An RNA of 177 nucleotides, treated with 2A3 and DMS and read out base by base.
2A3 adducts were read by reverse transcription with SuperScript II with manganese.
[RMDB]
RNA sequence: GGGAACGACUCGAGUAGAGUCGAAAAGCAUGCGAUCCUAGAUCUGCUAGUGAUCCGGUACAUGAUCCUAGAUAGUGAUCUCUCAUGGGAUCGUCAUGAGUGUGGAUCGAUCGGAUCCUAGCGUACCCAUGUGUCGCUUCUUCGGAAGCGACACAUGAAAAGAAACAACAACAACAAC
Reactivity to 2A3 in 0.01 (KOAc 150mM, MgCl2 10mM, bicine 150mM(pH8.5), 24C), signal-to-noise 1, nucleotides 027 to 126: g090c080a010u130g060c020g010a030u000c030c000u030a030g070a190u080c100u160g010c000u000a000g000u040g230a000u000c000c010g000g060u030a100c080a180u200g000a000u000c010c020u030a020g030a110u100a080g280u190g260a090u000c010u000c000u000c020a070u130g070g000g000a110u050c030g020u000c010a000u020g010a010g040u170g180u150g030g000a000u010c000g000a000u010c010g010g010a000u000c000c000u000a000g000c010g020u030a010c000c010
Reactivity to DMS in 0.01 (KOAc 150mM, MgCl2 10mM, bicine 150mM(pH8.5), 24C), signal-to-noise 1, nucleotides 027 to 126: g010c130a050u000g010c000g010a080u000c060c020u000a150g000a070u010c110u010g010c030u000a010g010u020g010a020u000c020c010g000g020u000a050c170a170u000g010a010u000c000c000u050a070g010a100u000a080g010u010g000a190u000c030u010c030u000c070a060u000g000g000g000a050u010c030g000u020c040a030u010g000a030g000u020g000u000g000g000a010u000c000g000a020u000c020g010g020a040u010c000c010u010a010g000c000g020u020a030c030c000